[RMDB]
RNA sequence: GGGAACGACUCGAGUAGAGUCGAAAAGAUAUGGACUUGUGGUUCUGAGCAACAGCUCGGAAACGAGACAUGCUCUACCAUACAAGUCCUAAGUCGAUAGUAGGAGUAGCUUCGGCUACUCCUACAAGUAUAGUGAGUUGUUCGCAACUCACUAUACAAAAGAAACAACAACAACAAC
Reactivity to DMS in 0.01 (KOAc 150mM, MgCl2 10mM, bicine 150mM(pH8.5), 24C), signal-to-noise 6, nucleotides 027 to 126: g000a040u000a300u010g000g000a020c000u000u000g030u000g010g010u000u010c170u000g000a010g020c000a040a090c290a140g000c000u000c010g010g010a080a070a140c010g020a010g020a030c120a180u000g010c000u000c010u000a020c000c000a090u020a110c030a010a020g010u000c000c000u000a020a060g010u000c030g000a170u000a110g000u000a010g000g010a030g000u000a000g010c000u000u010c240g030g010c000u000a010c000u000c000c000u000a000c000a010a070
Reactivity to 2A3 in 0.01 (KOAc 150mM, MgCl2 10mM, bicine 150mM(pH8.5), 24C), signal-to-noise 5, nucleotides 027 to 126: g010a020u080a040u110g010g010a010c000u010u020g000u020g020g030u200u300c160u190g000a000g000c000a000a150c050a180g050c000u010c000g010g020a060a060a010c010g010a000g030a050c040a070u100g000c000u000c010u050a010c000c000a030u090a250c020a000a010g000u000c000c000u010a110a030g040u020c010g040a100u180a140g010u000a000g000g000a020g000u010a000g000c010u050u070c300g010g000c000u000a000c000u010c000c000u000a000c000a000a000